[RMDB]
RNA sequence: GGGAACGACUCGAGUAGAGUCGAAAAGCGUUGGACAAGAGUUUAGCGAUGCUGCGGAUGGUUUGAUUUUUUUCCUUGUCUGCCUUUUCCUUGGCCGCAAUGUUUAGUUUGACAUACUCUUGAGCGAUGCAUUUCCAUUCGGGAAAAACGGUGGUGCCGAUAUAGGCACAUUCGUGUGCCUAUAUCGAAAAGAAACAACAACAACAAC
Reactivity to DMS in 0.01 (KOAc 150mM, MgCl2 10mM, bicine 150mM(pH8.5), 24C), signal-to-noise 4, nucleotides 027 to 156: g020c040g030u000u010g010g010a150c040a030a060g000a110g010u000u010u000a120g030c050g000a120u000g020c020u010g010c150g020g010a100u000g020g010u010u000u000g000a010u000u000u000u000u000u010u010c040c040u000u010g030u000c020u010g010c000c020u000u000u000u000c010c040u000u000g030g020c020c030g010c040a070a060u000g020u000u000u000a130g010u010u000u000g010a090c050a100u000a070c040u000c010u000u000g010a090g010c030g020a080u000g000c000a150u000u000u000c010c000a300u010u010c090g000g000g010a030a020a030a040a050c050g010g020u010g000g010u010g010c060
Reactivity to 2A3 in 0.01 (KOAc 150mM, MgCl2 10mM, bicine 150mM(pH8.5), 24C), signal-to-noise 9, nucleotides 027 to 156: g010c010g010u020u050g100g170a030c010a020a000g010a010g020u130u220u240a060g040c050g020a110u170g010c010u020g020c020g020g010a030u020g010g060u190u240u120g080a130u140u100u050u030u020u090u100c050c000u060u110g010u000c000u010g000c010c010u150u230u080u040c010c000u010u030g030g000c000c010g000c030a040a030u040g030u030u120u070a270g060u080u140u250g040a020c010a010u060a030c000u000c000u030u020g010a020g040c010g010a000u020g000c020a050u080u060u010c010c010a030u170u270c050g010g000g050a020a070a040a030a020c030g010g010u030g000g010u040g030c040